This 177-nucleotide RNA was probed chemically with 2A3 and DMS. The DMS profile rests on 39,146 reads. The reactions ran in a buffer of 150 mM KOAc, 10 mM MgCl2 and 150 mM bicine (pH 8.5), at 24 C. Source: RMDB library OK1LIB, as collected in RNAgym.
RNA sequence: GGGAACGACUCGAGUAGAGUCGAAAAUCAAGAGUACAACUUGGAACUAUACGAUUGAACUCGGAGUAAAUCAUAGUCGGAAGUCGAAUACAUGUUACUCAUCUGUCAUGUAUUCAAGUUGACAGAAGAUAGUAGGCUCAUUCGUGAGUUUACUAUCAAAAGAAACAACAACAACAAC
Reactivity to 2A3 in 0.01 (KOAc 150mM, MgCl2 10mM, bicine 150mM(pH8.5), 24C), signal-to-noise 9, nucleotides 027 to 126: u100c030a050a040g050a030g090u120a100c030a060a030c050u040u060g040g020a040a010c010u010a010u030a090c060g020a020u010u080g040a050a020c040u030c190g090g010a040g010u050a010a030a030u040c010a030u030a030g020u010c030g030g060a070a020g070u110c060g030a010a000u010a010c010a010u020g030u070u110a040c030u040c110a220u070c100u090g050u030c000a000u010g010u010a030u020u020c000a010a010g010u020u030g040a050c040a040g080a080a010
Reactivity to DMS in 0.01 (KOAc 150mM, MgCl2 10mM, bicine 150mM(pH8.5), 24C), signal-to-noise 9, nucleotides 027 to 126: u020c030a080a060g000a130g030u020a080c100a050a060c020u000u010g010g020a100a060c060u010a050u020a130c100g000a040u010u000g010a090a220c110u010c160g000g010a060g000u010a040a050a050u000c060a060u010a040g010u000c030g000g010a070a070g010u020c090g000a030a010u010a010c030a010u010g000u020u020a050c040u010c190a080u030c160u020g000u010c000a000u000g010u000a010u000u010c010a040a060g000u000u010g000a070c040a080g000a110a100